[RMDB]
RNA sequence: GGGAACGACUCGAGUAGAGUCGAAAACGGUCGGCAUCACCUCGGAAAGGAGGUGAUGCUAUGGAGACGUUUCAGGCUCUUCAAUUAAUGUUCUUAUUUGGAAUGUUUAUUCUAGCGCUUUUAACGUCGGGAGAGUGAUUUUCGAAUCACUCUCCCGAAAAGAAACAACAACAACAAC
Reactivity to 2A3 in 0.01 (KOAc 150mM, MgCl2 10mM, bicine 150mM(pH8.5), 24C), signal-to-noise 2, nucleotides 027 to 126: c100g060g110u100c030g030g010c030a000u000c000a000c000c000u010c010g150g300a150a130a100g300g000a000g000g000u000g000a000u000g000c000u000a000u030g030g020a070g020a030c000g000u000u000u060c090a010g000g000c020u020c000u050u000c000a050a000u000u090a010a000u010g030u000u000c000u030u280a300u140u100u190g010g000a000a000u020g030u000u000u070a040u040u000c070u000a000g010c000g030c000u120u020u000u060a030a000c020g010u000